[RMDB]
RNA sequence: GGGAACGACUCGAGUAGAGUCGAAAAAGCAACCGCAGCGAGCGACGUCAUUGUAGGCAUCGCGCAGUUCUCGCAAGCCUACUCGCCUGAAGGCAAGUAUGACGAUGAGAGCGCGGUUAACGUUAUGACUCAUGGCCGCAUUUGGGCGAUCGCGGACAAAAGAACUAGGGUUCGCCCUAGUUCUUUUAAAAGAAACAACAACAACAAC
Reactivity to 2A3 in 0.01 (KOAc 150mM, MgCl2 10mM, bicine 150mM(pH8.5), 24C), signal-to-noise 3, nucleotides 027 to 156: a000g120c070a050a010c010c010g000c050a060g000c030g050a020g020c030g060a060c020g000u000c000a020u050u080g020u040a070g010g000c010a050u080c080g000c000g000c040a060g050u130u040c070u020c090g000c010a050a020g000c000c000u010a040c030u050c050g000c020c020u270g150a290a180g030g000c000a030a030g060u090a080u040g020a060c010g020a030u080g030a040g000a000g030c010g000c000g000g010u010u020a060a000c020g040u060u080a070u200g040a020c010u010c110a080u080g110g020c000c020g010c020a050u050u090u090g040g020g020c070g000a010u050c040g000c000g000g010a000c040
Reactivity to DMS in 0.01 (KOAc 150mM, MgCl2 10mM, bicine 150mM(pH8.5), 24C), signal-to-noise 2, nucleotides 027 to 156: a060g030c030a080a030c010c000g070c010a140g030c060g010a230g020c000g010a040c030g010u010c010a090u010u000g000u000a070g030g010c010a080u000c090g050c040g040c040a130g000u000u000c040u010c020g030c060a090a190g000c010c000u000a040c010u010c040g060c010c000u000g010a220a200g040g010c000a060a030g000u010a040u000g010a070c020g010a160u000g000a170g000a090g010c070g010c000g020g010u000u000a010a020c040g000u000u000a060u010g020a080c030u000c030a140u000g000g040c000c010g000c030a160u000u000u000g020g010g040c010g000a050u030c070g140c020g000g010a100c090

The record gives the reactivity of an RNA of 207 nucleotides to 2A3 and DMS. Reactivities are given for positions 27 through 156. For DMS the reverse transcriptase was MarathonRT. The data come from the RNA Mapping Database (RMDB), library OK3TST. The reactions ran in a buffer of 150 mM KOAc, 10 mM MgCl2 and 150 mM bicine (pH 8.5), at 24 C.